[RMDB]
RNA sequence: GGGAACGACUCGAGUAGAGUCGAAAAACGGUCGUACGCGACCGAGGCGCGGCUAGGUCGACGGACCGAACAAUGGCAUCCCGGAUUCUGCCAUCCGCCGCGCAGCUUCUUCUCAAACGGUGCGGAAAAAAGUAGGACACCUUCGGGUGUCCUACAACUAGAAGAUAAGCUUCGGCUUAUCUUCUAGAAAAGAAACAACAACAACAAC
Reactivity to 2A3 in 0.01 (KOAc 150mM, MgCl2 10mM, bicine 150mM(pH8.5), 24C), signal-to-noise 3, nucleotides 027 to 156: a000c010g000g010u010c000g010u060a020c250g000c010g160a000c000c000g000a070g010g030c000g020c000g010g000c000u000a010g010g000u030c030g080a150c170g170g030a000c000c000g000a000a000c020a010a000u000g010g000c010a030u100c030c040c060g010g010a090u240u040c030u060g010c000c010a020u020c020c040g000c000c000g000c000g000c000a000g000c000u120u050c010u050u030c010u000c010a090a080a050c020g000g070u140g030c080g110g000a070a090a000a000a020a020g000u000a000g000g000a000c000a000c000c000u020u040c160g050g000g000u000g000u000c000c000u000a000c000a000a000
Reactivity to DMS in 0.01 (KOAc 150mM, MgCl2 10mM, bicine 150mM(pH8.5), 24C), signal-to-noise 1, nucleotides 027 to 156: a070c020g030g000u000c000g010u000a120c150g060c020g000a010c000c020g010a010g000g000c010g020c030g010g000c020u000a150g030g010u010c020g040a190c300g010g020a050c030c010g040a140a010c260a090a040u010g000g000c020a100u000c020c020c100g030g030a190u000u000c040u020g000c020c010a050u010c030c050g010c000c000g020c000g000c010a000g010c040u000u000c080u000u000c060u000c020a110a130a130c030g030g040u000g020c080g000g030a000a100a070a120a090a090g000u000a000g000g000a000c010a000c030c000u000u000c300g020g000g060u000g000u000c000c000u000a000c010a030a080